Annotation: Source: RMDB library TTRDES, as collected in RNAgym. An RNA of 177 nucleotides, treated with DMS and 2A3 and read out base by base. The reactions ran in a buffer of 150 mM KOAc, 10 mM MgCl2 and 150 mM bicine (pH 8.5), at 24 C. Reactivities are given for positions 27 through 126. For 2A3 the reverse transcriptase was SuperScript II with manganese.

[RMDB]
RNA sequence: GGGAACGACUCGAGUAGAGUCGAAAAGAUAUGGAUGUGAUAGCUCCAACAGCUUAAUCGGAAACGAUUAAGACAUGGAGACUAUACAUCCUAAGUCAAAAGGCUGGAGAGUUCGCUCUCCAGCCAAGCUUUAAUAGUACUUCGGUACUAUUAAAGCAAAAGAAACAACAACAACAAC
Reactivity to DMS in 0.01 (KOAc 150mM, MgCl2 10mM, bicine 150mM(pH8.5), 24C), signal-to-noise 2, nucleotides 027 to 126: g000a040u010a300u010g000g010a010u000g000u000g000a020u000a020g000c000u000c000c000a050a120c300a230g000c010u000u000a010a000u000c010g000g000a150a140a260c000g000a020u000u000a010a000g000a020c110a170u010g000g000a010g000a100c000u010a020u010a010c000a000u010c000c000u000a020a100g010u000c030a070a100a200a170g000g020c000u000g010g020a040g010a020g010u010u020c270g010c010u000c000u000c000c000a000g000c010c010a010a010
Reactivity to 2A3 in 0.01 (KOAc 150mM, MgCl2 10mM, bicine 150mM(pH8.5), 24C), signal-to-noise 1, nucleotides 027 to 126: g020a020u100a050u120g000g010a000u010g010u120g150a040u020a020g030c020u000c000c010a080a100c100a110g070c010u030u000a000a000u020c010g010g020a080a030a070c030g000a000u020u000a030a010g020a010c010a040u120g000g000a020g030a050c010u000a000u000a000c010a000u000c000c000u020a110a020g000u000c030a120a050a130a170g040g000c000u000g000g000a000g000a000g020u120u190c240g100c090u000c000u000c000c000a000g000c010c000a010a000